[RMDB]
RNA sequence: GGGAACGACUCGAGUAGAGUCGAAAACAAGCCGGGAGUUGGGCUGAGUGACCUGGGCGAAGGCCUGGGUUGCGCAGCUCCUAGAGUGGAGGGCAAUGCGUGAGGCUGGUUUCACAGAGCAGCGACUACCUCCCGCUCCCGGCAGUGGAAGGAUAACCACAUAAACGCACUUCGGUGCGUUUAUGUGAAAAGAAACAACAACAACAAC
Reactivity to 2A3 in 0.01 (KOAc 150mM, MgCl2 10mM, bicine 150mM(pH8.5), 24C), signal-to-noise 1, nucleotides 027 to 156: c030a030a100g000c000c000g020g020g000a020g000u180u170g000g020g040c000u000g000a010g050u000g010a000c000c000u020g000g010g000c080g170a300a100g240g030c020c010u000g000g000g010u000u000g000c020g010c020a000g000c000u030c000c000u080a100g010a000g030u300g000g000a010g000g040g080c210a060a160u210g000c020g060u130g030a010g010g000c010u010g050g080u090u230u250c210a220c030a050g010a080g000c010a000g000c030g040a050c050u100a020c000c000u000c000c000c000g010c000u010c000c010c010g000g000c000a000g000u020g020g100a180a100g070g050a070u140a090a050c020
Annotation:
An RNA of 207 nucleotides, treated with 2A3 and read out base by base. The reactions ran in a buffer of 150 mM KOAc, 10 mM MgCl2 and 150 mM bicine (pH 8.5), at 24 C.